This 177-nucleotide RNA was probed chemically with 2A3. For 2A3 the reverse transcriptase was SuperScript II with manganese. Reactivities are given for positions 27 through 126.

[RMDB]
RNA sequence: GGGAACGACUCGAGUAGAGUCGAAAAUAAUAGAGAAUACUACGGCACUGUCUCUCAUAACACAAGAGCACAAUAUCAACUUUAUUUGGGUUUUUAUGAUGGAAAUCCAGCGAAUUUGAAUCCGCUCAGACCCAGAUAGGUUCGCCUAUCUGGGUCUAAAAGAAACAACAACAACAAC
Reactivity to 2A3 in 0.01 (KOAc 150mM, MgCl2 10mM, bicine 150mM(pH8.5), 24C), signal-to-noise 1, nucleotides 027 to 126: u160a030a070u190a010g010a000g050a060a050u090a130c050u060a060c060g020g000c020a000c060u080g030u070c000u040c000u000c000a060u080a230a040c010a000c010a120a000g000a020g020c030a010c000a020a060u140a110u300c000a000a060c060u080u030u000a140u050u030u090g000g000g000u040u040u110u120u060a130u140g230a120u200g000g000a000a120a000u040c000c000a020g000c020g000a040a090u020u010u010g010a020a060u050c020c010g020c000u040c080